[RMDB]
RNA sequence: GGGAACGACUCGAGUAGAGUCGAAAAUGAAAUAACUAGCAUGCAUAAGUCGAGGUAGAGCGCGCGCUCUACCAAAAGAUGUGUGUAAAAACGCACGUGUAGGCGCGGCUACACAAAUAAACAAAAACUAAUAUUGAGAGUUCGCUCUCAAUAUUAGAAAAGAAACAACAACAACAAC
Reactivity to 2A3 in 0.01 (KOAc 150mM, MgCl2 10mM, bicine 150mM(pH8.5), 24C), signal-to-noise 2, nucleotides 027 to 126: u180g060a060a030a060u200a060a040c040u040a030g020c010a010u040g000c000a020u030a140a120g120u100c050g020a030g010g000u000a020g000a000g040c090g030c100g100c120g010c200u000c000u010a000c000c000a010a000a000a010g020a000u020g020u000g010u010g000u060a080a000a070a040a040c020g000c010a030c090g010u010g000u020a000g030g020c110g010c140g300g000c010u000a010c020a000c010a000a130a080u170a030a050a010c030a020a090a030a010a000
Reactivity to DMS in 0.01 (KOAc 150mM, MgCl2 10mM, bicine 150mM(pH8.5), 24C), signal-to-noise 2, nucleotides 027 to 126: u010g000a100a090a080u010a120a080c090u010a120g010c010a010u000g000c000a020u010a110a100g000u000c150g020a270g000g000u010a030g020a010g020c030g030c300g020c270g000c000u000c000u030a000c000c000a010a010a060a030g010a020u000g010u000g000u010g000u000a030a050a050a080a170c070g000c020a040c090g020u020g030u010a010g010g000c030g040c150g020g000c000u000a000c010a000c030a030a100a060u000a040a030a060c040a030a060a070a060a050
Annotation:
This 177-nucleotide RNA was probed chemically with 2A3 and DMS. The reactions ran in a buffer of 150 mM KOAc, 10 mM MgCl2 and 150 mM bicine (pH 8.5), at 24 C. Values are in units of 0.01, from 0 to 300, in steps of 10. For DMS the reverse transcriptase was MarathonRT. High 2A3 reactivity points to a flexible backbone, as in loops and unpaired stretches. It was measured as part of the RMDB library M2PK90.